Annotation:
This 177-nucleotide RNA was probed chemically with 2A3 and DMS. Values cover nucleotides 27 to 126. For 2A3 the reverse transcriptase was SuperScript II with manganese. Conditions: 150 mM KOAc, 10 mM MgCl2 and 150 mM bicine (pH 8.5), 24 C. For 2A3, 8,540 sequencing reads were counted. Source: RMDB library M2PK50, as collected in RNAgym.

RNA sequence: GGGAACGACUCGAGUAGAGUCGAAAAGGGCGUCAUUUCGAUGACGCCCAUACGUCUACUCCGAUUGGCGAGGACGACGCCGUCGGGCGCGUUUGCCAAUCGCACCGUCCAGAUUCGUCUGGACGAACUGGUACAUCCUUUUCGAAGGAUGUACCAGAAAAGAAACAACAACAACAAC
Reactivity to 2A3 in 0.01 (KOAc 150mM, MgCl2 10mM, bicine 150mM(pH8.5), 24C), signal-to-noise 4, nucleotides 027 to 126: g000g000g000c010g010u030c020a020u040u090u190c220g070a020u020g000a000c000g000c010c000c000a000u020a000c010g020u000c000u010a010c000u000c020c000g000a010u000u020g010g000c040g050a090g120g080a070c020g070a140c000g020c010c010g260u300c180g120g020g000c010g000c000g000u010u010u110g000c000c000a010a000u010c000g000c020a060c060c000g000u010c000c000a000g000a020u050u070c130g070u000c100u010g000g000a000c000g000a010a050
Reactivity to DMS in 0.01 (KOAc 150mM, MgCl2 10mM, bicine 150mM(pH8.5), 24C), signal-to-noise 2, nucleotides 027 to 126: g000g010g010c000g020u000c010a000u000u000u010c150g030a010u000g000a000c000g010c000c000c010a000u000a000c300g000u010c000u000a040c010u000c030c020g000a010u000u000g000g000c020g000a100g000g000a020c010g000a150c000g040c000c010g020u020c300g000g030g020c040g010c010g000u000u000u000g000c010c000a010a020u000c010g000c120a080c200c010g010u000c000c000a010g000a020u000u010c200g000u000c000u000g000g010a000c000g000a020a030